[RMDB]
An RNA of 177 nucleotides, treated with 2A3 and DMS and read out base by base. The RNA was probed in 150 mM KOAc, 10 mM MgCl2 and 150 mM bicine (pH 8.5) at 24 C. DMS adducts were read by reverse transcription with MarathonRT. It was measured as part of the RMDB library OK2TST.
RNA sequence: GGGAACGACUCGAGUAGAGUCGAAAACAUAGCCUUUUUGUACCGCAGGCCGCUCUGCGAUUCGCACAUACCAGGCCUUGAGAUUGGGGUAGUCGUCCAGAUUCAUCUGUUGCCACUCGUAACGGGACAUCUGGUACACAUUCGUGUGUACCAGAUGAAAAGAAACAACAACAACAAC
Reactivity to 2A3 in 0.01 (KOAc 150mM, MgCl2 10mM, bicine 150mM(pH8.5), 24C), signal-to-noise 4, nucleotides 027 to 126: c020a070u120a030g050c010c000u020u130u060u080u150g070u070a050c040c020g010c030a020g000g060c040c050g050c060u110c030u040g010c000g090a100u090u150c100g000c030a040c010a060u090a080c040c040a040g030g030c020c000u060u110g040a060g030a100u090u180g020g010g030g010u040a020g040u010c020g030u010c010c000a020g040a100u080u060c010a070u020c030u040g030u050u050g020c020c000a100c060u070c020g050u040a070a030c010g000g010g040a010
Reactivity to DMS in 0.01 (KOAc 150mM, MgCl2 10mM, bicine 150mM(pH8.5), 24C), signal-to-noise 5, nucleotides 027 to 126: c090a100u010a120g000c030c020u010u000u000u010u000g010u000a080c070c040g000c070a070g010g020c050c100g010c090u000c040u000g010c030g020a120u010u010c110g020c060a070c100a070u000a080c110c070a100g010g010c020c030u010u010g010a090g000a100u010u010g010g010g010g000u000a050g020u000c060g020u010c020c020a100g000a090u000u000c080a070u010c040u010g000u000u000g010c020c070a080c120u000c060g000u000a070a050c070g000g010g010a190